The record gives the reactivity of an RNA of 177 nucleotides to DMS and 2A3. The RNA was probed in 150 mM KOAc, 10 mM MgCl2 and 150 mM bicine (pH 8.5) at 24 C. As a SHAPE reagent, 2A3 marks flexible, mostly unpaired nucleotides at the ribose 2'-OH. For 2A3, 24,222 sequencing reads were counted.
[RMDB]
RNA sequence: GGGAACGACUCGAGUAGAGUCGAAAAAUGAACAAGUCCUCUAUCGACAGAGGUCUGGCCAGGUCCACGUUCUUCAGGCUGUAUGCUACGGAGGAGCGCAAGUACAGUGGCGGUCAGAAGGACCUCCCACAUUACAUGAGUUCGCUCAUGUAAUGUGAAAAGAAACAACAACAACAAC
Reactivity to DMS in 0.01 (KOAc 150mM, MgCl2 10mM, bicine 150mM(pH8.5), 24C), signal-to-noise 9, nucleotides 027 to 126: a100u010g010a090a100c130a110a100g000u000c000c000u000c030u000a150u010c170g000a130c200a060g010a050g010g010u000c010u000g010g010c020c120a070g010g010u010c010c030a180c040g000u000u000c010u000u010c030a120g010g010c010u000g010u010a090u010g010c010u010a100c210g000g010a040g010g000a060g010c030g000c090a050a070g010u000a050c080a070g020u000g000g020c060g000g010u000c040a070g010a100a080g000g000a040c020c030u000c020c040
Reactivity to 2A3 in 0.01 (KOAc 150mM, MgCl2 10mM, bicine 150mM(pH8.5), 24C), signal-to-noise 8, nucleotides 027 to 126: a000u150g020a070a020c040a130a050g070u020c010c000u000c020u060a130u200c090g100a040c050a100g030a020g010g000u000c020u020g020g010c000c020a050g020g070u000c010c000a010c030g020u020u030c000u030u040c020a030g040g000c010u020g080u240a100u280g030c010u060a060c130g140g010a020g020g020a030g020c030g000c080a090a030g060u070a090c040a070g030u010g030g010c020g010g020u030c020a010g060a090a050g120g020a030c010c000u000c000c000